[RMDB]
Background
Structure probing data (2A3 and DMS) for a 207-nucleotide construct. The RNA was probed in 150 mM KOAc, 10 mM MgCl2 and 150 mM bicine (pH 8.5) at 24 C. 2A3 adducts were read by reverse transcription with SuperScript II with manganese. Reactivities are given for positions 27 through 156.
RNA sequence: GGGAACGACUCGAGUAGAGUCGAAAACGAGUGUAAACGGCGGGAGUAACUAUGACUCUCUUAAGGUAGCCAAAUGCCUCGUCAUGUAAUUAGUGACGCGCAUGAAUGGAGCAACGAGAUUCCCACUGUCCCUACGGCCUGUCUUGUGAACCUACAGCUGCUAUGUUAGGUUCGCCUAACAUAGCAGAAAAGAAACAACAACAACAAC
Reactivity to 2A3 in 0.01 (KOAc 150mM, MgCl2 10mM, bicine 150mM(pH8.5), 24C), signal-to-noise 3, nucleotides 027 to 156: c020g030a030g050u100g030u110a110a130a030c080g040g010c020g010g030g010a010g020u060a060a080c120u080a120u300g070a030c020u020c000u020c000u040u100a100a040g110g000u030a030g040c000c000a060a090a010u040g010c030c010u100c050g000u000c010a010u050g060u110a200a130u170u140a070g020u020g010a010c000g020c010g000c000a010u020g070a090a070u100g050g020a040g000c030a040a020c050g020a010g010a100u020u020c000c000c000a030c020u010g020u010c000c000c000u020a030c030g030g000c000c010u020g030u080c010u040u070g060u030g030a040a040c000c010u030a040c050a030g000
Reactivity to DMS in 0.01 (KOAc 150mM, MgCl2 10mM, bicine 150mM(pH8.5), 24C), signal-to-noise 3, nucleotides 027 to 156: c010g010a090g000u020g030u000a060a060a070c060g010g000c070g010g000g000a100g020u000a070a130c060u010a100u020g000a060c010u010c010u010c050u010u000a090a070g010g040u000a050g000c040c080a040a130a100u000g010c000c010u000c010g000u000c000a020u000g010u010a110a170u000u000a240g010u000g020a020c020g040c300g030c010a010u000g000a070a110u000g020g010a220g000c050a070a100c070g000a110g000a200u000u000c030c000c000a080c060u000g010u010c020c010c030u000a070c030g030g000c040c020u000g000u000c040u000u000g030u000g000a080a080c040c030u000a040c100a110g010